[RMDB]
RNA sequence: GGGAACGACUCGAGUAGAGUCGAAAAGGGGUCCCAAGCGAAGAGGUUAAGACAUGAUCUGAAGCCUCCACGGAUCAACAGCUUAACUACCCACCUUCGCUCUGGGACGGAGGCACCCAAACCAGUUAGGCAUAGCUUCGGCUAUGCCUAACUGGAACCCAACUUCUAAGUUCGCUUAGAAGUUGGGAAAAGAAACAACAACAACAAC
Reactivity to 2A3 in 0.01 (KOAc 150mM, MgCl2 10mM, bicine 150mM(pH8.5), 24C), signal-to-noise 2, nucleotides 027 to 156: g070g000g050g010u000c000c000c000a010a000g000c000g000a000a000g000a020g000g020u000u020a010a020g010a060c080a270u300g000a010u000c010u020g020a090a000g010c000c000u000c000c000a020c010g030g000a010u010c010a040a090c030a090g170c010u010u020a010a000c010u070a060c080c060c040a050c030c010u010u020c000g010c010u020c120u020g010g000g000a000c010g000g000a000g000g000c000a020c000c000c000a030a040a070c000c000a000g000u000u000a010g000g000c010a000u000a000g000c000u020u020c140g000g000c000u000a000u000g000c010c000u000a000a000c000u000g000g000a000a000
Reactivity to DMS in 0.01 (KOAc 150mM, MgCl2 10mM, bicine 150mM(pH8.5), 24C), signal-to-noise 1, nucleotides 027 to 156: g020g040g030g010u000c000c010c010a130a060g020c010g040a070a020g000a290g000g020u000u000a060a000g020a060c060a300u000g000a060u000c000u010g020a100a160g040c000c010u020c000c020a300c060g020g000a030u000c020a120a140c110a120g000c000u000u000a010a040c000u010a070c070c020c060a300c020c000u000u010c030g010c010u010c170u010g010g000g050a070c070g010g040a000g070g060c000a120c000c010c000a050a130a140c000c020a030g000u010u010a000g010g000c000a030u000a020g050c000u000u000c300g080g040c000u020a000u000g010c020c000u010a000a000c000u000g010g010a000a100